[RMDB]
RNA sequence: GGGAACGACUCGAGUAGAGUCGAAAAAGACAUACGUUCGCGUAUGUCUGACGGGCACCUGACCCUAAGGAAAUGCUCUAUGACAGGACACACUGAUUCUGAUACCUCGAGAUUUCGAUCUCGAGAACGUCUCAUUCGGGUUCGCCCGAAUGAGACGAAAAGAAACAACAACAACAAC
Reactivity to DMS in 0.01 (KOAc 150mM, MgCl2 10mM, bicine 150mM(pH8.5), 24C), signal-to-noise 1, nucleotides 027 to 126: a020g000a020c000a000u010a000c000g050u000u000c240g040c020g070u000a000u000g000u000c000u000g000a090c180g000g000g010c000a080c040c010u000g010a180c030c020c020u000a040a070g010g000a100a160a090u000g040c040u000c010u020a070u010g000a110c080a160g000g040a080c090a050c110a130c190u000g000a020u000u000c000u000g000a200u020a100c180c000u010c000g010a020g010a020u000u000u000c170g000a020u000c010u000c000g030a010g000a080a090
Reactivity to 2A3 in 0.01 (KOAc 150mM, MgCl2 10mM, bicine 150mM(pH8.5), 24C), signal-to-noise 1, nucleotides 027 to 126: a000g000a000c000a030u010a000c000g000u000u080c280g000c010g080u010a000u000g040u000c000u000g020a010c000g000g000g000c070a040c050c020u050g090a130c010c000c020u010a010a010g000g020a060a010a180u140g000c010u000c050u080a130u080g130a070c050a010g000g000a040c010a000c000a030c150u170g050a210u040u000c010u040g050a020u040a130c000c000u010c010g000a000g010a000u120u030u080c160g070a000u000c010u010c000g000a010g010a000a000